[RMDB]
RNA sequence: GGGAACGACUCGAGUAGAGUCGAAAAGAUAUGGAUCGCUAGUUCCUUGGAUUUAAGCUCGGAAACGAGCUUUGUCAGGAACAGCGAGUCCUAAGUCGUAGGAGGGCAACGUUCGCGUUGCCCUCAACAACAGCCUUUGGUUCGCCAAAGGCUGUUGAAAAGAAACAACAACAACAAC
Reactivity to DMS in 0.01 (KOAc 150mM, MgCl2 10mM, bicine 150mM(pH8.5), 24C), signal-to-noise 2, nucleotides 027 to 126: g020a020u010a300u000g000g040a240u000c000g020c010u000a150g030u000u000c000c010u010u010g010g000a010u010u020u010a000a010g030c000u000c000g010g030a090a070a210c010g010a010g000c000u000u010u000g010u000c000a000g010g000a000a030c010a000g030c000g000a020g010u000c000c010u000a060a120g010u010c010g010u000a110g000g010a010g000g030g010c030a030a020c010g000u010u010c220g010c010g070u000u000g010c020c000c000u000c000a010a010
Reactivity to 2A3 in 0.01 (KOAc 150mM, MgCl2 10mM, bicine 150mM(pH8.5), 24C), signal-to-noise 1, nucleotides 027 to 126: g010a000u090a050u110g020g000a010u000c010g000c070u070a180g020u020u030c010c000u060u200g250g020a060u300u250u130a020a010g000c020u000c010g050g020a070a090a100c020g010a000g000c000u000u000u000g010u000c020a000g000g000a000a010c020a000g010c000g000a000g020u010c000c000u010a010a040g070u030c060g060u120a070g290g140a020g020g010g000c040a000a010c000g070u080u110c300g000c010g130u060u000g000c000c000c020u020c000a000a000